[RMDB]
RNA sequence: GGGAACGACUCGAGUAGAGUCGAAAAAGACCACGACUGUGCUGAGCGCGUACGUGCGCCACGUGGACGUGCCUCUGGCGGCUGUGCUGCUGGCUAAGGGAGUGGUGCAGGACGCCGUUCGCAGCGAUAUGCUGCCUGAUUUCGAUCAGGCAGCAUAAAAAGAAACAACAACAACAAC
Reactivity to 2A3 in 0.01 (KOAc 150mM, MgCl2 10mM, bicine 150mM(pH8.5), 24C), signal-to-noise 3, nucleotides 027 to 126: a000g140a030c020c010a030c040g100a120c040u040g000u080g100c100u120g060a030g050c030g000c000g010u080a130c020g110u070g000c010g000c020c000a010c000g050u120g090g110a060c070g060u080g040c010c020u030c040u050g020g010c020g020g000c040u160g110u190g100c020u040g000c010u050g050g030c030u060a100a100g060g010g020a090g000u010g000g000u000g000c000a020g070g030a030c020g020c080c020g050u030u050c040g000c020a020g000c020g000a040
Reactivity to DMS in 0.01 (KOAc 150mM, MgCl2 10mM, bicine 150mM(pH8.5), 24C), signal-to-noise 3, nucleotides 027 to 126: a080g010a210c090c020a110c060g030a120c060u000g010u010g010c140u010g010a080g020c040g000c010g010u010a040c090g000u010g010c010g010c030c020a020c040g000u010g010g000a080c110g000u000g000c060c010u000c090u010g020g010c040g000g000c010u010g010u000g010c050u000g010c000u000g010g000c160u010a100a090g020g010g000a280g000u000g000g030u020g020c010a110g000g000a080c010g010c030c030g020u000u000c040g000c020a060g010c060g000a180